[RMDB]
RNA sequence: GGGAACGACUCGAGUAGAGUCGAAAACAUUUAAAGGAAGGUGACCUGAUAUCACCCAAUAUUAGGUAACUGCAAAAGGGUGGGGCUCAGAAAAUGCACCUAACCCCAUGUAGAAAGCAAUGAGGGACUGGGGAAAACCCUUUCGUUGCGGUAAAAAGUAGCAUUACGGUUUCGACCGUAAUGCUACAAAAGAAACAACAACAACAAC
Reactivity to 2A3 in 0.01 (KOAc 150mM, MgCl2 10mM, bicine 150mM(pH8.5), 24C), signal-to-noise 1, nucleotides 027 to 156: c020a030u200u190u240a170a100a110g140g010a030a000g050g070u060g030a050c000c000u000g020a010u020a000u030c030a070c030c000c000a000a010u030a010u030u000a010g010g000u040a080a070c000u020g000c040a050a020a030a080g000g020g000u020g000g020g000g000c030u020c100a000g180a060a100a020a020u120g000c050a120c120c000u060a090a100c010c000c000c000a000u080g010u050a020g090a190a110a000g050c010a040a040u020g000a000g000g000g000a010c060u060g060g010g000g130a000a000a000a060c000c010c000u000u080u050c030g020u020u020g000c040g000g040u120a060a130a000a000a040
This 207-nucleotide RNA was probed chemically with 2A3. It was measured as part of the RMDB library OK3TST. Reactivities are rounded to 0.1 and cut off at 0 and 3.